The record gives the reactivity of an RNA of 207 nucleotides to DMS and 2A3.
For 2A3 the reverse transcriptase was SuperScript II with manganese.
2A3 is a SHAPE reagent: it acylates the 2'-hydroxyl of flexible nucleotides of all four kinds.
Source: RMDB library M2RFPK, as collected in RNAgym.
Conditions: 150 mM KOAc, 10 mM MgCl2 and 150 mM bicine (pH 8.5), 24 C.
For DMS the reverse transcriptase was MarathonRT.

RNA sequence: GGGAACGACUCGAGUAGAGUCGAAAAGUAUGGAUGCCACCGUGACGGCUCAAUCACACAAGUGCCAACGACAACGAGGCGCUCGCUAUUGCUGCGUAACUGACGGCCUGACGGUCUGACGUUACAAAAAACGAAAAGUGGUUCGCCACUUUUCGAAUCAGAUAUCUUUCUUCGGAAAGAUAUCUGAAAAAGAAACAACAACAACAAC
Reactivity to DMS in 0.01 (KOAc 150mM, MgCl2 10mM, bicine 150mM(pH8.5), 24C), signal-to-noise 3, nucleotides 027 to 156: g010u010a110u000g010g010a130u000g030c030c030a070c050c060g000u000g030a110c110g010g010c050u010c060a070a160u000c070a100c050a070c080a040a070g030u000g010c000c010a090a220c060g000a160c040a070a100c070g010a190g000g000c010g040c030u000c010g020c020u000a050u010u000g000c010u000g000c010g020u000a020a020c020u000g010a300c300g010g010c000c000u010g010a140c210g030g010u000c010u040g010a300c250g000u000u000a010c030a000a020a020a050a080a150c010g000a000a020a000a020g010u000g010g030u010u010c300g020c000c000a010c000u000u000u010u010c000g000a020a060
Reactivity to 2A3 in 0.01 (KOAc 150mM, MgCl2 10mM, bicine 150mM(pH8.5), 24C), signal-to-noise 6, nucleotides 027 to 156: g090u070a070u180g040g050a060u080g020c020c020a050c040c060g040u040g090a090c090g010g020c010u000c060a050a100u100c020a030c010a010c020a150a070g020u030g040c020c010a110a070c070g130a080c040a160a030c070g030a090g020g000c010g010c040u050c020g040c040u100a100u180u290g040c080u080g030c040g030u010a020a010c010u010g020a010c010g000g010c000c030u150g110a070c110g000g000u000c010u000g010a010c010g000u010u020a010c000a000a070a010a010a000a000c020g000a000a000a000a000g000u000g050g010u020u040c150g030c050c010a000c000u000u000u000u000c000g000a010a050